[RMDB]
RNA sequence: GGGAACGACUCGAGUAGAGUCGAAAAGCAGCGACAACAGUCACAGACACUAGAGCUCACGCCACUUCAGUUCAGGUGUGAAAACAUGAUAGCAAAAACAGGCUAUGAUGUUACGUACGAGUGACGAAAAUAUUUUUAUAUUCGUAUAAAAAUAUUUAAAAGAAACAACAACAACAAC
Reactivity to 2A3 in 0.01 (KOAc 150mM, MgCl2 10mM, bicine 150mM(pH8.5), 24C), signal-to-noise 8, nucleotides 027 to 126: g060c040a000g030c010g100a030c070a170a010c020a060g030u020c010a010c010a050g100a040c020a010c080u100a050g010a030g150c020u010c000a010c000g030c010c010a070c060u200u160c100a100g030u130u100c050a050g010g040u020g000u010g030a060a060a020a010c000a010u070g020a000u080a000g000c030a010a060a130a150a090c060a070g210g000c000u000a000u020g150a010u000g020u010u060a030c070g010u040a040c040g040a040g090u030g030a010c010g020a040
Reactivity to DMS in 0.01 (KOAc 150mM, MgCl2 10mM, bicine 150mM(pH8.5), 24C), signal-to-noise 6, nucleotides 027 to 126: g010c050a080g000c060g010a050c110a110a080c170a110g010u010c010a010c030a100g000a130c070a030c040u000a200g010a120g000c080u010c070a040c030g010c010c020a100c110u040u030c180a080g010u010u010c120a160g010g030u010g000u000g000a020a080a050a010c010a010u010g000a020u000a010g010c010a020a080a070a110a110c300a120g000g000c000u000a000u000g000a010u000g000u000u000a060c130g000u000a030c040g010a290g000u010g000a030c010g000a120